[RMDB]
RNA sequence: GGGAACGACUCGAGUAGAGUCGAAAAAUGACUUUGGAGAUUUUGUCAAGACAGUGCCUGGUUGUGGUGUUGCUGUGGCAGAUUCUUAUUAUUCUUAUAUGAUGCCAAUGCUGACUAUGUGUCAUGCCUCGGGAAUAAGUUUCGACUUAUUCCCGAGAAAAGAAACAACAACAACAAC
Reactivity to DMS in 0.01 (KOAc 150mM, MgCl2 10mM, bicine 150mM(pH8.5), 24C), signal-to-noise 3, nucleotides 027 to 126: a100u000g000a060c080u000u000u000g000g000a130g000a080u010u000u000u010g010u010c010a060a100g010a080c060a040g010u000g000c020c000u000g020g000u000u000g030u010g010g030u000g010u010u000g030c020u000g030u000g010g010c030a030g000a060u000u000c030u010u000a060u010u010a110u010u010c060u010u010a090u020a050u010g000a100u010g010c030c110a050a090u010g000c030u000g000a070c060u000a100u000g030u000g010u000c010a020u010g020c070
Reactivity to 2A3 in 0.01 (KOAc 150mM, MgCl2 10mM, bicine 150mM(pH8.5), 24C), signal-to-noise 3, nucleotides 027 to 126: a000u060g000a030c030u080u080u180g090g020a050g020a030u050u070u060u090g030u000c010a000a010g050a060c010a010g020u020g020c020c010u090g120g090u160u140g130u070g090g040u010g010u060u030g000c020u020g000u050g120g000c010a010g020a080u040u000c020u030u040a090u080u040a080u110u050c030u030u070a110u020a050u260g060a030u060g030c030c040a070a010u030g040c000u010g000a010c020u070a050u300g080u050g000u060c000a010u130g000c000